[RMDB]
RNA sequence: GGGAACGACUCGAGUAGAGUCGAAAAUCGAAAACAGUCUCAAGCGAACAACAAAGUGAUCGAAGUAGAAAUCCGGUCCAACUUAGACACCGAGAUAUCUAUUGGCAAUCUAGAAUGGGCUGAUAGAGUUUCUCUACAUAUUCGUAUGUAGAGAAACAAAAGAAACAACAACAACAAC
Reactivity to DMS in 0.01 (KOAc 150mM, MgCl2 10mM, bicine 150mM(pH8.5), 24C), signal-to-noise 8, nucleotides 027 to 126: u000c070g010a110a090a120a170c080a060g010u010c020u010c050a080a120g020c050g010a080a080c120a080a120c110a070a100a110g020u000g010a030u000c020g010a100a040g000u000a050g010a030a120a060u000c010c010g010g000u000c060c090a070a070c120u010u010a060g010a090c170a050c030c020g010a100g000a030u000a090u000c010u000a010u000u000g010g010c150a090a030u000c050u010a080g010a110a090u000g000g000g010c010u000g010a060u000a060g000a150
Reactivity to 2A3 in 0.01 (KOAc 150mM, MgCl2 10mM, bicine 150mM(pH8.5), 24C), signal-to-noise 6, nucleotides 027 to 126: u040c000g020a000a010a010a040c020a000g050u010c030u020c110a060a040g060c040g080a060a050c020a030a020c020a060a250a020g070u060g050a020u040c020g030a050a000g020u030a010g040a050a040a010u000c010c010g020g000u000c050c020a040a050c080u090u130a050g040a050c020a020c050c030g070a090g010a290u050a020u030c000u000a020u030u030g030g000c020a030a040u010c020u040a040g050a160a060u090g020g020g000c010u010g010a050u070a040g100a000
Source: RMDB library OK2TST, as collected in RNAgym. An RNA of 177 nucleotides, treated with DMS and 2A3 and read out base by base. Values cover nucleotides 27 to 126. The DMS profile rests on 9,410 reads. For DMS the reverse transcriptase was MarathonRT. For 2A3, 11,912 sequencing reads were counted.